[RMDB]
Source: RMDB library OK2TST, as collected in RNAgym. Structure probing data (2A3 and DMS) for a 177-nucleotide construct. High DMS reactivity at an A or C suggests that its Watson-Crick edge is free. The reactions ran in a buffer of 150 mM KOAc, 10 mM MgCl2 and 150 mM bicine (pH 8.5), at 24 C. Values cover nucleotides 27 to 126.

RNA sequence: GGGAACGACUCGAGUAGAGUCGAAAACUCAUGUACACCACGAAAAAGCCGCCUAGUCAAUUUGGAAGUAGAAUCGAACACACAUAACGAUACUAGCAAUGUGAUGGAUCAAGCGAGCGACAAUCCAUACUCCGAAUUGAUUCGUCAAUUCGGAGUAAAAAGAAACAACAACAACAAC
Reactivity to 2A3 in 0.01 (KOAc 150mM, MgCl2 10mM, bicine 150mM(pH8.5), 24C), signal-to-noise 2, nucleotides 027 to 126: c000u010c000a000u060g000u030a030c030a030c040c030a030c070g040a120a070a000a000a020g050c030c030g000c030c040u030a020g050u100c040a070a090u050u040u160g070g030a120a030g080u070a040g020a050a010u040c060g070a150a010c060a000c000a000c000a100u100a220a030c080g010a020u030a080c060u060a040g060c030a050a060u090g000u010g030a050u000g050g000a030u070c010a030a010g100c000g010a040g040c020g050a030c020a010a030u080c000c000a050
Reactivity to DMS in 0.01 (KOAc 150mM, MgCl2 10mM, bicine 150mM(pH8.5), 24C), signal-to-noise 3, nucleotides 027 to 126: c020u000c010a130u010g010u000a060c080a070c050c030a040c080g020a070a090a070a140a180g000c030c070g010c090c020u000a060g010u000c040a060a090u000u010u000g010g000a080a130g030u020a050g010a070a070u020c100g000a090a120c080a080c060a050c060a040u000a070a080c050g000a090u010a050c050u000a070g000c080a070a050u010g010u000g000a060u000g000g010a040u000c080a040a080g000c080g000a040g010c030g000a090c120a070a050u020c040c040a180